[RMDB]
RNA sequence: GGGAACGACUCGAGUAGAGUCGAAAAGACGAUGGCUUGAAUCUGUACAGUCAGAUUAGCUGUGUAGAAGACACAAGGCGACUUGUGUUACGCAUAGAGUAAAUCUGGCUCUGUGCCGACGUCGCCACUAGUGCUAUCUAUUCGUAGAUAGCACUAGAAAAGAAACAACAACAACAAC
Reactivity to DMS in 0.01 (KOAc 150mM, MgCl2 10mM, bicine 150mM(pH8.5), 24C), signal-to-noise 2, nucleotides 027 to 126: g000a070c110g010a150u000g000g000c060u000u000g000a300a300u020c220u000g000u000a160c300a050g000u000c010a000g000a020u000u000a070g000c000u000g010u000g010u000a020g010a060a020g000a010c010a000c000a010a010g000g000c180g000a090c000u000u000g010u000g000u000u000a110c110g000c000a000u000a000g000a040g020u000a030a000a010u000c030u000g000g000c020u000c050u000g010u000g000c010c020g000a040c020g020u000c030g000c000c000a180
Reactivity to 2A3 in 0.01 (KOAc 150mM, MgCl2 10mM, bicine 150mM(pH8.5), 24C), signal-to-noise 2, nucleotides 027 to 126: g050a000c090g060a060u130g000g000c030u120u300g200a040a150u040c080u120g070u170a090c000a030g000u010c000a000g000a010u010u000a020g000c000u000g000u000g000u020a040g020a200a000g010a020c000a000c000a010a000g010g010c010g000a030c020u000u000g000u000g000u010u000a020c070g010c000a000u010a000g020a000g200u080a060a050a060u000c010u010g000g000c010u000c020u050g030u030g000c000c000g000a020c020g010u010c020g000c010c000a010